This 177-nucleotide RNA was probed chemically with 2A3 and DMS. The RNA was probed in 150 mM KOAc, 10 mM MgCl2 and 150 mM bicine (pH 8.5) at 24 C. Values are in units of 0.01, from 0 to 300, in steps of 10. Source: RMDB library OK2TST, as collected in RNAgym. The 2A3 profile rests on 9,134 reads.

RNA sequence: GGGAACGACUCGAGUAGAGUCGAAAAGAGCGUCACGCCUUGCUUGAGCCACUGCCACAGCUGCGCGCGGCUGAUUUCAGCGGUGGCGGCGUCUUCCAUCAGGUUGUGAAUCGGCACCGCGCCACUGUAGUUAUUGAGUUUUCGAACUCAAUAACUAAAAAGAAACAACAACAACAAC
Reactivity to 2A3 in 0.01 (KOAc 150mM, MgCl2 10mM, bicine 150mM(pH8.5), 24C), signal-to-noise 2, nucleotides 027 to 126: g020a010g010c010g040u030c030a010c070g010c010c010u090u140g020c030u070u110g080a020g020c000c010a030c020u030g010c000c010a040c010a040g010c020u040g010c070g020c020g010c000g070g000c020u020g060a200u030u220u210c050a010g000c000g020g000u010g000g010c010g000g000c020g020u000c030u130u000c020c010a090u090c060a040g180g000u140u150g050u130g070a060a090u090c040g040g000c030a010c050c030g010c020g010c000c020a050c040u120g040
Reactivity to DMS in 0.01 (KOAc 150mM, MgCl2 10mM, bicine 150mM(pH8.5), 24C), signal-to-noise 9, nucleotides 027 to 126: g010a110g010c040g010u000c050a080c070g010c030c030u010u000g020c050u000u000g000a140g010c020c020a040c040u000g000c010c090a120c040a030g010c050u000g010c100g020c130g030c070g010g010c020u000g000a110u000u000u010c160a070g000c010g010g030u000g010g020c060g010g010c070g010u000c060u010u000c030c020a070u010c100a090g010g000u000u000g010u000g010a060a060u000c070g000g010c030a090c070c040g000c040g010c020c050a050c110u010g000